RNA sequence: GGGAACGACUCGAGUAGAGUCGAAAAUAACGUAUCACCUGUUUUACUUUCAAGAUCCCCAGCCCCAAGCGUGUCGGCCCAUGAAGUAUUACCAGUGCCCUCGGGCUUAAAUUAUCCAGAGACCCAACUAAAUGGUCUCAUUCGUGAGACCAUUUAGAAAAGAAACAACAACAACAAC
Reactivity to DMS in 0.01 (KOAc 150mM, MgCl2 10mM, bicine 150mM(pH8.5), 24C), signal-to-noise 3, nucleotides 027 to 126: u010a070a100c130g020u000a070u000c060a090c050c030u010g000u000u000u010u000a090c080u010u010u010c100a090a110g030a090u010c020c010c000c070a110g010c030c020c010c050a040a100g020c060g010u010g010u000c030g010g000c020c010c020a070u000g010a080a080g010u020a070u000u010a080c070c050a050g020u020g010c000c040c020u000c110g030g010g010c040u000u000a020a070a080u000u000a070u000c060c040a090g000a080g000a110c010c010c020a080a250

Structure probing data (DMS) for a 177-nucleotide construct. For DMS, 2,014 sequencing reads were counted.